[RMDB]
RNA sequence: GGGAACGACUCGAGUAGAGUCGAAAAACGACUGAAGAUGGUGGGGACUUGUUAAUGCGUUUUUCUCACCGAUUUAUCCUUCUGUUAUCGCUAUUAUUAGCAAGCUUGCCUCUGUAUGCUCAACGCGUAUCCUCAGUGAGUUCGCUCACUGAGGAUAAAAAGAAACAACAACAACAAC
Reactivity to 2A3 in 0.01 (KOAc 150mM, MgCl2 10mM, bicine 150mM(pH8.5), 24C), signal-to-noise 4, nucleotides 027 to 126: a010c070g030a020c040u070g020a010a000g040a050u230g000g040u060g000g010g000g010a010c030u050u050g100u090u220a130a050u190g020c020g040u040u000u000u060u010c000u000c020a000c000c010g000a000u020u020u050a060u070c040c010u020u020c020u040g070u040u060a140u120c040g000c030u050a030u210u040a090u090u040a140g000c010a040a000g050c020u070u090g020c000c040u000c010u030g070u050a000u140g030c020u050c040a030a080c040g000c030g090
Reactivity to DMS in 0.01 (KOAc 150mM, MgCl2 10mM, bicine 150mM(pH8.5), 24C), signal-to-noise 3, nucleotides 027 to 126: a090c090g000a100c030u010g030a080a030g030a060u030g000g000u030g000g000g010g000a070c160u010u000g000u010u020a120a130u080g020c030g010u000u000u000u000u000c000u000c010a020c020c030g000a070u030u010u040a090u020c100c020u020u000c010u010g010u000u010a090u010c090g000c030u000a070u010u020a170u020u030a000g020c020a120a070g020c090u000u030g000c010c010u010c030u010g000u000a050u010g000c000u000c060a020a050c140g020c090g020
An RNA of 177 nucleotides, treated with 2A3 and DMS and read out base by base. It was measured as part of the RMDB library OK1LIB. DMS adducts were read by reverse transcription with MarathonRT. The reactions ran in a buffer of 150 mM KOAc, 10 mM MgCl2 and 150 mM bicine (pH 8.5), at 24 C. The 2A3 profile rests on 2,317 reads. 2A3 adducts were read by reverse transcription with SuperScript II with manganese.